[RMDB]
RNA sequence: GGGAACGACUCGAGUAGAGUCGAAAAUGUGUGUUCGUCCGCCGCCGCGGACGGACUCGCUGAGAAGAUUGGUCGCGGCAGUGGCGGCGGCACACCUCUAAAGCCGCGUGAGGCUCUGUCGGCGGUGGGCGGAGGGCUCGUUCGCGAGCCUUCCGCCAAAAGAAACAACAACAACAAC
Reactivity to 2A3 in 0.01 (KOAc 150mM, MgCl2 10mM, bicine 150mM(pH8.5), 24C), signal-to-noise 2, nucleotides 027 to 126: u150g000u000g000u010g050u130u200c000g080u080c000c000g000c010c000g040c100c080g000c000g020g030a000c000g000g000a000c000u030c000g150c040u070g030a000g000a260a150g140a180u190u260g070g000u080c030g010c000g070g000c010a080g050u170g190g060c030g050g000c000g000g000c000a000c000a000c010c000u030c020u060a110a150a020g000c000c010g010c030g050u150g050a080g180g000c060u060c080u040g030u020c030g060g030c020g000g030u050g030